[RMDB]
RNA sequence: GGGAACGACUCGAGUAGAGUCGAAAAGAUAUGGAUCAACCGCAUGAAGAGCUAUAUCGGAAACGAUAUGAGCUUGUUGCGUGUUGAUCCUAAGUCAAAGACAGAACAACUUCGGUUGUUCUGUCAACCCUACCUGAAUGUUCGCAUUCAGGUAGGGAAAAGAAACAACAACAACAAC
Reactivity to DMS in 0.01 (KOAc 150mM, MgCl2 10mM, bicine 150mM(pH8.5), 24C), signal-to-noise 2, nucleotides 027 to 126: g010a020u000a070u020g000g000a000u000c000a030a010c000c000g010c000a120u040g010a110a140g000a000g020c000u010a030u010a000u010c000g040g010a010a020a040c000g000a010u000a000u000g010a040g020c000u000u000g010u010u000g010c000g010u000g020u010u000g000a010u000c000c000u000a000a070g000u000c010a090a150a130g010a020c000a000g000a020a000c000a020a010c000u000u030c280g030g000u000u000g020u000u000c000u000g010u000c000a030a060
Reactivity to 2A3 in 0.01 (KOAc 150mM, MgCl2 10mM, bicine 150mM(pH8.5), 24C), signal-to-noise 4, nucleotides 027 to 126: g000a020u010a020u040g000g010a000u010c000a010a000c020c000g070c080a070u300g300a300a300g010a050g000c000u000a000u000a010u020c000g000g000a000a020a000c010g000a010u010a040u190g260a050g000c000u020u030g250u150u090g010c020g000u300g010u060u000g000a000u010c000c000u010a000a000g000u010c040a180a120a000g000a000c010a010g010a000a000c000a010a000c040u120u240c300g070g000u000u000g000u010u000c000u000g000u000c000a000a000

Structure probing data (DMS and 2A3) for a 177-nucleotide construct. Reactivities are given for positions 27 through 126. 2A3 adducts were read by reverse transcription with SuperScript II with manganese. The DMS profile rests on 3,650 reads. The data come from the RNA Mapping Database (RMDB), library TTRDES. For DMS the reverse transcriptase was MarathonRT. The RNA was probed in 150 mM KOAc, 10 mM MgCl2 and 150 mM bicine (pH 8.5) at 24 C.